[RMDB]
The data come from the RNA Mapping Database (RMDB), library ARCHII. The record gives the reactivity of an RNA of 207 nucleotides to 2A3 and DMS. The DMS profile rests on 1,825 reads.
RNA sequence: GGGAACGACUCGAGUAGAGUCGAAAACCAAAUAGAAUUCAAUUGAAUUGUCCAUAUUGUGAUAAGAAAGAUUUAUCACCAUCAACAUAUAAACGAUGGCACGGCGACAAUUGCAAAACAAGGUUCAACGACUAGUCUUCGGACGUAGGGUCAAGCGCUCCUAAACAUCGUUCGCGAUGUUUAGGAGAAAAGAAACAACAACAACAAC
Reactivity to 2A3 in 0.01 (KOAc 150mM, MgCl2 10mM, bicine 150mM(pH8.5), 24C), signal-to-noise 3, nucleotides 027 to 156: c000c000a000a010a010u010a010g010a010a010u010u010c010a010a010u010u050g010a040a030u070u040g030u040c020c070a100u090a080u200u150g020u020g010a010u040a060a040g130a210a210a040g060a070u070u020u020a020u030c000a000c040c000a020u040c020a020a130c050a060u180a020u100a280a150a010c070g060a030u050g010g000c070a020c100g040g010c000g020a010c040a080a200u080u090g010c030a030a080a040a030c010a010a030g020g040u010u010c010a060a050c110g120a020c020u000a000g010u000c010u010u040c150g020g000a000c000g010u010a020g000g000g000u020c020a030a010g010c020g010
Reactivity to DMS in 0.01 (KOAc 150mM, MgCl2 10mM, bicine 150mM(pH8.5), 24C), signal-to-noise 1, nucleotides 027 to 156: c000c000a020a040a000u000a060g010a070a050u000u010c010a050a030u000u030g010a010a000u000u010g010u000c010c000a060u000a180u000u000g020u000g010a060u010a030a040g020a130a110a180g000a180u000u010u000a070u010c010a110c010c040a020u000c000a060a090c110a090u000a070u000a030a100a300c030g020a180u000g050g010c020a090c010g050g010c110g030a030c010a040a060u000u000g010c070a110a070a080a050c000a090a050g000g000u000u000c010a070a150c060g020a290c020u000a030g010u000c020u010u000c160g040g000a000c000g050u000a130g010g010g040u010c050a090a010g040c130g000